RNA sequence: GGGAACGACUCGAGUAGAGUCGAAAAGAAGAGACCGCCGGGGAAGGGGGGCGAACCGACGGGAGUUCAAUGGUAAAGAGGCGAAGAACCUCGGAGGUUCCCUCCCAAGAAGGUUCAAGAGAAUACAACAGACAAUAGUUCGCUAUUGUCAAAAGAAACAACAACAACAAC
Reactivity to 2A3 in 0.01 (KOAc 150mM, MgCl2 10mM, bicine 150mM(pH8.5), 24C), signal-to-noise 9, nucleotides 027 to 129: g050a020a000g060a010g020a120c020c010g000c000c010g020g000g010g020a010a040g010g010g000g000g000g000c100g000a010a000c000c000g020a010c010g000g000g000a220g010u010u000c030a060a060u100g030g000u090a110a130a060g080a030g060g030c060g040a080a030g040a050a040c000c000u000c000g010g000a010g000g000u010u010c000c000c000u010c000c000c000a010a020g030a000a000g020g000u050u060c010a030a000g030a010g010a050a010u140a100c080a120a010c030a070
Reactivity to DMS in 0.01 (KOAc 150mM, MgCl2 10mM, bicine 150mM(pH8.5), 24C), signal-to-noise 7, nucleotides 027 to 129: g020a050a040g020a000g000a130c040c040g020c020c030g000g020g030g060a070a090g040g040g010g020g000g020c190g030a020a010c020c000g020a210c060g000g010g000a070g030u020u030c040a090a100u070g040g000u030a070a080a080g030a070g010g010c040g000a110a100g010a020a010c010c010u020c030g030g000a160g000g010u030u000c010c020c000u020c010c020c020a050a060g020a100a060g000g000u010u020c080a070a090g000a030g020a050a040u070a090c180a070a060c150a100

Source: RMDB library 15KLIB, as collected in RNAgym. Structure probing data (2A3 and DMS) for a 170-nucleotide construct. The DMS profile rests on 43,513 reads. DMS adducts were read by reverse transcription with MarathonRT. Reactivities are given for positions 27 through 129. For 2A3, 35,294 sequencing reads were counted.